[RMDB]
About this RNA: The data come from the RNA Mapping Database (RMDB), library M2RFPK. An RNA of 207 nucleotides, treated with 2A3 and read out base by base. The RNA was probed in 150 mM KOAc, 10 mM MgCl2 and 150 mM bicine (pH 8.5) at 24 C.

RNA sequence: GGGAACGACUCGAGUAGAGUCGAAAAAGGGAAGAAAAGAAUUUAGAAAGGAGAUUCCGCCCCAGCUUGCGGUGCGGCCGAAAGGCUGUAAGGCAUCCCGGAGAGGGGAGGCAAGGCGAAAGCCAAAAACGGUACACCAUCUUCGGAUGGUGUACAACUAUAUCACGUGCUUCGGCACGUGAUAUAGAAAAGAAACAACAACAACAAC
Reactivity to 2A3 in 0.01 (KOAc 150mM, MgCl2 10mM, bicine 150mM(pH8.5), 24C), signal-to-noise 1, nucleotides 027 to 156: a000g020g060g040a020a040g040a020a140a070a010g070a110a070u090u210u270a080g100a090a080a070g030g060a050g010a080u080u010c010c010g020c020c010c000c010a050g080c040u070u090g020c050g000g040u100g020c020g010g000c000c000g030a030a010a000g010g000c030u000g070u080a040a000g070g010c030a050u020c050c030c000g000g010a020g000a010g000g000g000g000a000g000g000c040a050a050g000g000c040g040a110a010a010g000c000c000a020a190a000a000a000c060g040g010u010a000c000a000c010c000a000u000c000u030u000c130g150g030a000u000g000g000u000g020u000a000c010a000a000